[RMDB]
RNA sequence: GGGAACGACUCGAGUAGAGUCGAAAAGAUUGACUUCGGUCAAUCAAAAAAGAUAUGGACGCGAUGAAAUUGUCACCUUGGAUUUAGAGUCGGAAACGACUCUUGUCAGGUGGCAAUGGAGCGUCCUAAGUCAAAAAUUCUCGCUUCGGCGAGAAAAAGAACAGUAAAGUUUCGACUUUACUGUUCUAAAAGAAACAACAACAACAAC
Reactivity to DMS in 0.01 (KOAc 150mM, MgCl2 10mM, bicine 150mM(pH8.5), 24C), signal-to-noise 2, nucleotides 027 to 156: g000a000u010u000g010a000c030u000u010c300g080g040u000c010a000a030u000c020a000a040a090a140a100a150g010a140u010a250u020g000g020a000c000g030c020g040a160u000g000a150a070a040u000u000g030u010c000a000c020c000u000u020g050g020a030u000u000u000a020g020a010g010u000c000g010g010a130a140a260c020g030a050c010u000c000u000u000g010u010c020a040g010g030u000g010g000c020a000a000u010g000g000a210g020c000g030u000c000c000u000a000a030g010u000c000a000a020a060a150a180u000u010c010u000c000g020c030u000u000c300g010g000c000g020a010g000a020a010a020a150
Reactivity to 2A3 in 0.01 (KOAc 150mM, MgCl2 10mM, bicine 150mM(pH8.5), 24C), signal-to-noise 2, nucleotides 027 to 156: g000a000u000u010g010a000c020u060u120c300g070g000u000c010a000a010u000c000a030a000a020a020a000a060g060a020u070a050u060g010g000a000c010g030c020g180a280u050g020a010a060a020u010u000g010u020c010a000c000c000u090u150g190g000a070u260u290u190a020g000a010g000u000c010g000g040a040a040a020c000g000a010c000u000c000u010u010g000u000c000a010g000g000u010g010g010c000a000a000u000g000g000a000g000c000g000u000c000c000u000a000a010g000u000c010a000a020a080a000a090u100u010c000u010c020g000c010u050u060c250g110g000c000g010a000g000a020a000a000a000
Chemical mapping of a 207-nucleotide RNA with DMS and 2A3. Values cover nucleotides 27 to 156. The DMS profile rests on 3,147 reads.